[RMDB]
RNA sequence: GGGAACGACUCGAGUAGAGUCGAAAAUUCCUGCCAUGAGACCGCAACGAGAGCAUGUCGCAUCGAAUGGACUCGGGGAGUCGGCAGCUUGCCCCACGGAUGAGCGCCUAAUGCCGGCAUUCGGGAAAAUAGACUGGAUAGUUCGCUAUCCAGUCAAGACUGAGGAAGGGUUCGCCCUUCCUCAGUCAAAAGAAACAACAACAACAAC
Reactivity to 2A3 in 0.01 (KOAc 150mM, MgCl2 10mM, bicine 150mM(pH8.5), 24C), signal-to-noise 1, nucleotides 027 to 156: u000u000c000c020u010g020c020c000a060u040g020a050g000a070c000c100g120c040a120a040c160g050a020g000a010g170c140a210u160g040u010c090g000c010a060u000c010g000a000a000u010g020g010a040c050u010c030g000g000g000g010a100g000u000c000g000g000c020a040g000c010u020u010g040c000c010c020c080a070c060g030g010a150u070g000a010g010c000g040c030c050u060a090a020u090g000c010c010g010g000c000a010u030u010c020g030g010g090a030a000a060a110u180a010g000a000c000u000g000g000a010u000a000g010u010u010c100g000c110u000a000u010c010c020a010g000u000c000a000a000